Description
This 177-nucleotide RNA was probed chemically with DMS and 2A3. 2A3 adducts were read by reverse transcription with SuperScript II with manganese. The data come from the RNA Mapping Database (RMDB), libraries RFM100 and RFMREP. Conditions: 150 mM KOAc, 10 mM MgCl2 and 150 mM bicine (pH 8.5), 24 C.
RNA sequence: GGGAACGACUCGAGUAGAGUCGAAAAGUCGUUUUGAUGAUAUACCUUCGCCUCUUUAGAGUAAGGACGAUCUUCAGAGUUGAGUCUUUGAUCUUAAUUUUUUUUAAGACUAAUUCAAAGUACUCGUACAUGCAACUUGUUUCGACAAGUUGCAUGUAAAAGAAACAACAACAACAAC
Reactivity to DMS in 0.01 (KOAc 150mM, MgCl2 10mM, bicine 150mM(pH8.5), 24C), signal-to-noise 1, nucleotides 027 to 126: g000u000c070g010u010u000u000u000g030a040u000g000a000u000a140u060a100c100c000u000u000c130g000c130c040u030c030u000u040u080a220g000a010g010u000a010a060g010g020a100c170g020a000u010c030u000u030c010a040g000a100g000u040u000g070a010g030u000c000u000u000u000g000a000u010c010u000u010a020a000u000u000u000u000u030u180u000u000a060a000g000a210c160u000a120a150u010u000c010a000a030a020g000u040a000c000u000c000g000u010
Reactivity to 2A3 in 0.01 (KOAc 150mM, MgCl2 10mM, bicine 150mM(pH8.5), 24C), signal-to-noise 3, nucleotides 027 to 126: g060u020c030g000u030u040u050u030g070a070u030g030a000u020a000u040a080c010c000u070u050c100g100c080c000u040c010u100u100u110a090g020a020g050u040a020a040g060g030a090c140g020a040u000c000u050u030c070a030g020a050g140u060u130g030a020g000u020c000u030u000u020g010a030u010c020u060u000a050a080u090u100u060u120u040u050u010u030a020a020g010a040c030u090a100a090u080u050c000a000a010a010g020u040a030c010u000c000g010u010
For DMS the reverse transcriptase was MarathonRT. Reactivities are given for positions 27 through 126.